[RMDB]
RNA sequence: GGGAACGACUCGAGUAGAGUCGAAAAGCAGUAUCUCGUUAGGCGAGGCUCCUAUACAAACACAGGUUGCUGAUCUGACGACGUCGAGAGACGCCCAAGAUUACGACAGGAUAUAUCGAACCAAGGUGAACCUGUCCAGGGUUCGCCCUGGACAGAAGUAUCUUGUUUGCUUCGGCAAACAAGAUACAAAAGAAACAACAACAACAAC
Reactivity to 2A3 in 0.01 (KOAc 150mM, MgCl2 10mM, bicine 150mM(pH8.5), 24C), signal-to-noise 3, nucleotides 027 to 156: g100c050a010g030u100a090u090c030u010c010g030u080u090a090g020g140c060g020a050g000g020c020u060c010c020u100a100u070a160c150a030a180a030c120a030c030a090g060g050u090u090g000c050u030g010a040u000c010u040g010a020c020g010a020c010g020u010c010g010a050g000a020g000a100c000g020c010c010c000a020a020g050a050u080u100a010c040g050a010c010a030g100g000a030u060a010u010a040u190c080g040a050a040c040c030a040a040g080g020u060g040a040a030c000c000u000g010u000c020c000a000g020g000g000u020u040c130g050c010c000c000u010g000g000a000c000a000g000a010a000
Reactivity to DMS in 0.01 (KOAc 150mM, MgCl2 10mM, bicine 150mM(pH8.5), 24C), signal-to-noise 2, nucleotides 027 to 156: g000c030a070g070u010a040u000c020u000c030g030u000u010a110g010g000c070g010a090g040g000c000u010c010c000u000a160u000a220c090a140a060a100c070a110c080a070g050g000u010u000g010c060u030g040a030u000c010u000g010a120c040g000a030c000g020u000c010g000a300g000a300g010a010c010g000c000c070c100a210a100g000a030u000u000a050c030g020a140c070a130g010g040a170u000a070u000a060u000c020g000a050a130c030c030a070a140g000g000u000g010a080a150c070c000u000g020u010c050c020a030g020g030g020u000u010c300g040c020c000c000u000g000g020a070c010a050g000a050a170